[RMDB]
RNA sequence: GGGAACGACUCGAGUAGAGUCGAAAACUGCGGAACUCCUAGCCGCUUGUUUUGCUCGCAGCCGGUCUGGAGCAAAGCUCAUCGGAACUGACAAUUCUGUCGUCCUCUCGCGGAAAUAUACAUCGUUCUCUAGACGACUGUUCGCAGUCGUCUAGAGAAAAGAAACAACAACAACAAC
Reactivity to 2A3 in 0.01 (KOAc 150mM, MgCl2 10mM, bicine 150mM(pH8.5), 24C), signal-to-noise 2, nucleotides 027 to 126: c000u040g010c010g030g020a040a060c040u020c020c030u050a090g000c000c000g000c000u000u050g000u020u010u020u000g020c010u040c020g300c000a030g000c000c070g240g020u090c000u030g010g010a040g010c000a010a020a040g010c010u030c050a110u070c040g010g020a060a040c020u060g000a040c050a040a190u120u000c050u150g030u130c000g020u030c000c000u100c000u000c000g090c030g090g020a010a110a000u170a020u010a060c040a120u070c100g040u040u000

Chemical mapping of a 177-nucleotide RNA with 2A3.
For 2A3 the reverse transcriptase was SuperScript II with manganese.
The reactions ran in a buffer of 150 mM KOAc, 10 mM MgCl2 and 150 mM bicine (pH 8.5), at 24 C.
Values cover nucleotides 27 to 126.
It was measured as part of the RMDB library RFM100.